Conditions: 150 mM KOAc, 10 mM MgCl2 and 150 mM bicine (pH 8.5), 24 C. The record gives the reactivity of an RNA of 207 nucleotides to DMS and 2A3. It was measured as part of the RMDB library OK3TST. For DMS the reverse transcriptase was MarathonRT. 2A3 adducts were read by reverse transcription with SuperScript II with manganese.

[RMDB]
RNA sequence: GGGAACGACUCGAGUAGAGUCGAAAAUUUAGUUCAUUUCAUUAGAUCUUAACCUACAGCCCAUGUAAUUUUCUCUUCCAGGAUACUCCUUUAGUAAUAUUGGAUAUAUACUGCUUUAGAAGAAUUAAUGUCUUAAAAUGUGAACAAUUAUAUUGAACACGAAAAUACGAUUCGUCGUAUUUUCGUGAAAAGAAACAACAACAACAAC
Reactivity to DMS in 0.01 (KOAc 150mM, MgCl2 10mM, bicine 150mM(pH8.5), 24C), signal-to-noise 1, nucleotides 027 to 156: u020u010u010a150g010u000u040c000a050u010u000u020c110a300u000u000a080g000a060u000c130u000u000a050a050c050c070u000a060c020a120g020c050c070c070a200u030g000u020a080a180u000u000u000u000c000u000c000u000u000c030c070a070g020g020a000u000a030c130u000c020c000u010u000u020a000g010u020a130a120u000a030u010u010g000g020a090u010a070u000a040u000a010c000u000g000c010u000u000u000a030g000a030a040g000a030a130u000u000a040a070u000g010u000c060u000u000a060a110a100a080u010g030u000g010a040a060c020a040a090u000u000a080u020a090u010u010g000a070a270
Reactivity to 2A3 in 0.01 (KOAc 150mM, MgCl2 10mM, bicine 150mM(pH8.5), 24C), signal-to-noise 2, nucleotides 027 to 156: u060u070u090a020g010u000u030c020a050u060u000u080c090a120u120u120a040g000a120u010c000u050u030a060a110c020c030u030a010c030a030g020c050c050c010a040u030g080u050a070a210u030u050u070u050c050u020c000u010u050c030c000a000g010g010a020u000a010c040u030c000c010u020u000u020a020g000u070a090a170u050a060u080u050g000g000a010u010a030u000a000u040a090c020u010g050c000u090u150u120a010g010a070a000g000a020a010u070u060a060a000u050g040u020c000u020u040a070a110a030a080u070g020u040g050a000a000c010a010a070u300u070a100u070a100u140u210g140a070a020

The 2A3 profile rests on 987 reads.